[RMDB]
RNA sequence: GGGAACGACUCGAGUAGAGUCGAAAAUGAAAGAGUUUCCUUUAACCUUUAUGGAAGCAAAGAUCAAGAAUACAACCUUCCCAUAUGGUUGACUUAAUUAUUCCCUAGGUUCCUGGAAGCUAAAAAAUAGAGAGGUAUAAUUCGUUAUACCUCUCUAAAAAGAAACAACAACAACAAC
Reactivity to DMS in 0.01 (KOAc 150mM, MgCl2 10mM, bicine 150mM(pH8.5), 24C), signal-to-noise 2, nucleotides 027 to 126: u020g010a050a130a080g010a080g010u000u010u010c010c010u000u000u000a020a030c010c000u000u010u000a060u000g000g020a010a040g010c180a100a060a110g000a030u000c030a010a030g010a100a140u010a120c050a020a050c030c000u020u000c090c040c090a130u010a090u000g000g000u000u000g000a100c020u000u000a020a040u000u000a120u000u000c010c000c070u000a030g010g010u000u000c120c040u000g010g000a010a020g000c020u010a000a020a040a050a080a110
Reactivity to 2A3 in 0.01 (KOAc 150mM, MgCl2 10mM, bicine 150mM(pH8.5), 24C), signal-to-noise 1, nucleotides 027 to 126: u280g000a050a080a020g160a020g000u010u000u000c000c000u010u010u010a000a000c000c000u000u130u130a170u300g010g030a010a000g060c100a070a040a040g060a020u020c030a030a020g040a280a040u130a140c000a020a000c020c020u040u070c000c030c040a040u030a020u180g010g020u010u020g010a010c010u000u020a000a020u080u100a090u090u060c000c000c000u000a020g030g050u000u060c020c020u020g020g000a000a040g010c020u040a100a300a010a000a000a000

The record gives the reactivity of an RNA of 177 nucleotides to DMS and 2A3.
Reactivities are given for positions 27 through 126.
It was measured as part of the RMDB library M2PK90.
For 2A3, 974 sequencing reads were counted.